Conditions: 150 mM KOAc, 10 mM MgCl2 and 150 mM bicine (pH 8.5), 24 C. The record gives the reactivity of an RNA of 177 nucleotides to 2A3 and DMS. The 2A3 profile rests on 5,859 reads. DMS adducts were read by reverse transcription with MarathonRT.
RNA sequence: GGGAACGACUCGAGUAGAGUCGAAAAUGCAAUAUAUUAGCAUGGAGACUAGUGAUUACAUCACUUACGACAUAUGCAGAGGCCGUUGAAUGUGCAGGGGUGCAGUGGAAACGCGCGUUUUUGAGAACUAGUAGGUUAACUUCGGUUAACCUACUAGAAAAGAAACAACAACAACAAC
Reactivity to 2A3 in 0.01 (KOAc 150mM, MgCl2 10mM, bicine 150mM(pH8.5), 24C), signal-to-noise 7, nucleotides 027 to 126: u050g010c020a060a020u100a040u050a100u300u210a090g000c010a000u020g050g020a100g020a070c040u050a010g020u010g020a020u050u200a050c080a130u040c000a000c000u030u080a030c040g070a020c040a050u110a030u120g030c020a020g010a060g080g030c040c010g030u050u090g070a110a050u080g020u040g040c030a030g020g020g010g000u030g020c040a020g040u040g040g050a050a070a030c020g010c000g010c020g030u000u000u000u080u140g130a130g000a030a040
Reactivity to DMS in 0.01 (KOAc 150mM, MgCl2 10mM, bicine 150mM(pH8.5), 24C), signal-to-noise 7, nucleotides 027 to 126: u010g000c030a090a050u040a090u030a080u020u040a140g020c010a040u010g000g020a140g010a290c140u020a020g000u000g020a020u010u050a090c090a300u010c030a000c020u010u020a090c090g020a090c070a020u010a090u020g030c020a040g000a120g000g000c030c040g000u010u020g000a070a060u020g020u030g020c040a050g000g000g000g000u000g000c040a030g000u000g000g010a030a050a070c110g010c080g020c080g000u000u010u000u000u000g000a130g010a100a130